[RMDB]
Conditions: 150 mM KOAc, 10 mM MgCl2 and 150 mM bicine (pH 8.5), 24 C. Chemical mapping of a 177-nucleotide RNA with DMS and 2A3. It was measured as part of the RMDB library OK2TST.
RNA sequence: GGGAACGACUCGAGUAGAGUCGAAAAAGAGCCUAAUAGAGCAUACUCUUUAACAUUUUUGAGUCUUUUGGUGAGAGUCCUCCACUAGUAUAUGCAAAGGCAGCCAAGGUGAUGAAAUCUCAUCUGGUGAAUGGAAAUCAUUCGUGAUUUCCAUUCAAAAAGAAACAACAACAACAAC
Reactivity to DMS in 0.01 (KOAc 150mM, MgCl2 10mM, bicine 150mM(pH8.5), 24C), signal-to-noise 4, nucleotides 027 to 126: a070g010a170g010c040c030u000a080a110u010a140g010a160g020c060a050u010a090c020u000c010u010u000u000a090a120c100a120u000u000u000u000u000g000a070g020u000c030u000u000u000u000g000g010u000g000a090g000a120g010u000c040c020u000c040c010a030c050u010a040g010u000a060u000a040u000g000c040a060a070a090g000g010c050a090g000c040c020a030a080g010g020u000g000a040u000g000a070a080a110u000c110u000c000a020u000c020u000g010g010
Reactivity to 2A3 in 0.01 (KOAc 150mM, MgCl2 10mM, bicine 150mM(pH8.5), 24C), signal-to-noise 3, nucleotides 027 to 126: a000g060a030g010c030c000u060a120a060u120a080g140a040g030c020a030u040a080c010u020c000u060u100u110a150a040c090a170u100u110u080u120u120g040a030g060u050c040u000u110u120u100g050g010u050g030a070g020a020g070u040c000c020u040c010c000a040c000u000a030g080u060a080u010a010u200g000c020a070a040a070g070g000c000a010g030c010c010a040a030g000g000u000g000a030u030g030a010a080a100u040c040u000c030a050u000c020u030g030g040
DMS adducts were read by reverse transcription with MarathonRT. For 2A3, 2,665 sequencing reads were counted.